Description: Structure probing data (2A3) for a 177-nucleotide construct.
RNA sequence: GGGAACGACUCGAGUAGAGUCGAAAAACUCGAGCAGUACGCUGCUCGAGAUGCGAUGAUGAGUGAAUCCAAUGCUGACGGGAUGAUGAACCCCGAACCUGAGCACAUGGCCUUACGAGGCCAUGAAGUUCCAGCGGUCUUUCGAGACCGCUGGAACAAAAGAAACAACAACAACAAC
Reactivity to 2A3 in 0.01 (KOAc 150mM, MgCl2 10mM, bicine 150mM(pH8.5), 24C), signal-to-noise 1, nucleotides 027 to 126: a000c000u000c000g000a010g020c040a010g000u180a100c300g000c030u000g000c000u000c000g000a000g000a070u090g070c120g080a040u050g050a010u030g000a030g090u150g110a170a000u050c080c010a110a080u080g000c010u060g020a110c040g020g000g000a120u060g000a010u150g100a130a060c050c000c000c000g010a000a000c000c050u060g000a000g060c000a030c000a150u000g000g080c000c000u070u050a040c300g020a000g000g000c000c000a000u000g040a000a000

Conditions: 150 mM KOAc, 10 mM MgCl2 and 150 mM bicine (pH 8.5), 24 C.